[RMDB]
RNA sequence: GGGAACGACUCGAGUAGAGUCGAAAAGAUAUGGACGCAGAUAUCGAACUACACCAAACGUUCGGAAACGAACGCUAGGUGCGAUGUAGUCCUAAGUCAAAUCAUUCGGAGUUCGCUCCGAAUGAAACUUUGACCCUAUGUUCGCAUAGGGUCAAAGAAAAGAAACAACAACAACAAC
Reactivity to 2A3 in 0.01 (KOAc 150mM, MgCl2 10mM, bicine 150mM(pH8.5), 24C), signal-to-noise 2, nucleotides 027 to 126: g020a020u060a020u120g010g030a000c060g020c170a070g100a300u140a050u160c000g000a070a090c070u180a090c290a000c060c010a000a000a100c020g000u010u010c030g010g060a100a030a010c010g000a000a010c000g000c030u010a030g000g000u030g010c020g000a000u040g060u090a070g020u000c000c000u000a140a010g060u020c050a040a030a240u080c000a010u000u020c000g000g010a000g020u060u090c180g090c140u000c000c020g000a000a000u000g000a000a000a000
Reactivity to DMS in 0.01 (KOAc 150mM, MgCl2 10mM, bicine 150mM(pH8.5), 24C), signal-to-noise 3, nucleotides 027 to 126: g000a040u000a300u010g000g000a030c000g000c180a090g000a110u020a030u000c010g000a080a060c100u010a300c010a000c000c010a040a090a130c000g030u000u000c000g000g010a050a130a160c000g000a000a000c010g040c020u000a170g000g020u000g020c040g010a020u010g000u000a160g010u000c000c000u000a060a060g000u020c020a080a100a130u020c000a010u000u000c000g010g010a010g000u000u010c300g000c010u010c010c000g000a000a000u010g020a000a010a050
An RNA of 177 nucleotides, treated with 2A3 and DMS and read out base by base. As a SHAPE reagent, 2A3 marks flexible, mostly unpaired nucleotides at the ribose 2'-OH. Values cover nucleotides 27 to 126. Conditions: 150 mM KOAc, 10 mM MgCl2 and 150 mM bicine (pH 8.5), 24 C.